Structure probing data (2A3) for a 207-nucleotide construct.

RNA sequence: GGGAACGACUCGAGUAGAGUCGAAAAGAUAUGGAGCACUUGUCAGAUCGUCAUCACACGACGAAGGGAGCUCGGAAACGAGCUCCCAGAGUGUGAGACGAUCUUGGAUUUAGUGCUCCUAAGUCAAAAGCGGAAAAACGUUCGCGUUUUUCCGCAAGCCGUUCUUAUAGUUCGCUAUAAGAACGGCAAAAGAAACAACAACAACAAC
Reactivity to 2A3 in 0.01 (KOAc 150mM, MgCl2 10mM, bicine 150mM(pH8.5), 24C), signal-to-noise 1, nucleotides 027 to 156: g010a020u090a020u160g000g000a000g000c000a000c000u010u020g000u000c010a000g000a010u000c000g040u010c030a300u020c020a190c020a040c080g300a090c100g000a070a060g010g000g000a000g000c000u000c030g020g000a050a070a030c010g000a000g000c020u000c010c000c000a000g000a010g000u000g010u010g000a040g000a000c000g010a000u030c000u000u010g000g000a000u060u150u120a000g000u000g000c000u000c000c000u000a000a000g000u000c000a000a030a080a080g000c010g010g020a000a000a000a000a000c000g030u100u140c280g010c000g210u000u000u000u000u000c000c000g000c000a000a000